The record gives the reactivity of an RNA of 177 nucleotides to 2A3 and DMS. DMS adducts were read by reverse transcription with MarathonRT. The RNA was probed in 150 mM KOAc, 10 mM MgCl2 and 150 mM bicine (pH 8.5) at 24 C. Source: RMDB library OK2TRN, as collected in RNAgym. 2A3 adducts were read by reverse transcription with SuperScript II with manganese. For 2A3, 824 sequencing reads were counted.

RNA sequence: GGGAACGACUCGAGUAGAGUCGAAAACUAGAGCAGUUGGUUAAGAACACAAGGAACCCAGCCUUGUGAAUAUGCCAGAGAGGUUGAGAGGUUCCCAACUCCUCCAAGAUCACAACUGCGGCGGGGCUAAUUGACCAACAUUCGUGUUGGUCAAUUAAAAAGAAACAACAACAACAAC
Reactivity to 2A3 in 0.01 (KOAc 150mM, MgCl2 10mM, bicine 150mM(pH8.5), 24C), signal-to-noise 1, nucleotides 027 to 126: c040u070a000g020a030g090c010a020g030u020u040g000g070u120u050a140a030g130a180a010c020a000c050a020a020g000g010a050a040c020c000c000a010g000c030c000u000u000g010u000g010a000a020u090a050u080g070c060c070a020g080a010g000a010g230g000u060u010g080a080g000a000g050g160u090u160c050c040c030a010a080c020u010c000c020u080c000c000a150a020g030a110u060c010a000c000a140a000c020u000g000c000g060g000c020g040g000g000g010c010
Reactivity to DMS in 0.01 (KOAc 150mM, MgCl2 10mM, bicine 150mM(pH8.5), 24C), signal-to-noise 3, nucleotides 027 to 126: c060u010a100g020a130g030c020a010g010u000u000g010g040u000u000a080a070g010a110a210c020a020c010a010a010g010g010a090a100c040c010c040a180g010c010c010u010u000g010u000g010a040a080u000a080u010g000c120c170a110g010a060g020a020g000g020u010u010g010a100g000a080g000g000u000u000c010c020c010a090a050c030u000c020c010u000c000c050a080a100g000a080u010c070a070c040a030a020c000u000g020c050g010g020c110g010g000g020g000c300